An RNA of 177 nucleotides, treated with DMS and read out base by base. It was measured as part of the RMDB library TTRDES. DMS adducts were read by reverse transcription with MarathonRT. The reactions ran in a buffer of 150 mM KOAc, 10 mM MgCl2 and 150 mM bicine (pH 8.5), at 24 C. Values are in units of 0.01, from 0 to 300, in steps of 10.
RNA sequence: GGGAACGACUCGAGUAGAGUCGAAAAAAAAAGAUAUGGACCAUGGAAGCCAGGAAGCCAUGAACCGGCCACAUCGGAAACGAUGUGGUCAAAAUGGUGGAAGGCUACCAUGGUCCUAAGUCAAAAACCUCUAUAACAUCUUCGGAUGUUAUAGAGGAAAAGAAACAACAACAACAAC
Reactivity to DMS in 0.01 (KOAc 150mM, MgCl2 10mM, bicine 150mM(pH8.5), 24C), signal-to-noise 1, nucleotides 027 to 126: a050a120a160a100a020g010a000u000a300u000g000g000a010c000c000a040u000g000g010a210a020g020c000c020a090g000g000a300a160g020c000c000a000u020g030a090a170c300c190g000g050c000c020a000c010a000u000c050g000g000a090a040a130c000g040a000u000g000u010g000g000u010c010a000a010a090a000u000g000g000u010g000g060a250a160g000g000c000u000a080c000c000a020u000g010g000u000c020c000u020a000a070g010u010c010a100a080a010a120a130